RNA sequence: GGGAACGACUCGAGUAGAGUCGAAAAAGAAUGCUAGCAGGGUACACACAAGAAGAGUAAUUGCACUGGAUUAGAAAUACUGGGGUGGGCCUCUUUUUAAUGUCCAGUGUCCUUUGUCUUAACAUUUCUUUAUGCAUUUCUUCGGAAAUGCAUAAAGAAAAGAAACAACAACAACAAC
Reactivity to 2A3 in 0.01 (KOAc 150mM, MgCl2 10mM, bicine 150mM(pH8.5), 24C), signal-to-noise 3, nucleotides 027 to 126: a000g110a130a010u090g040c010u020a010g020c010a020g040g000g050u120a020c050a010c000a000c010a070a030g060a030a000g030a020g060u100a150a030u100u110g000c000a000c010u000g000g010a020u060u090a120g120a080a080a070u150a050c090u020g010g000g070g000u090g040g110g090c000c000u050c010u050u110u000u000u140a160a060u120g020u000c000c000a010g000u010g000u060c070c000u070u070u060g040u060c050u120u090a110a040c040a070u000u030u000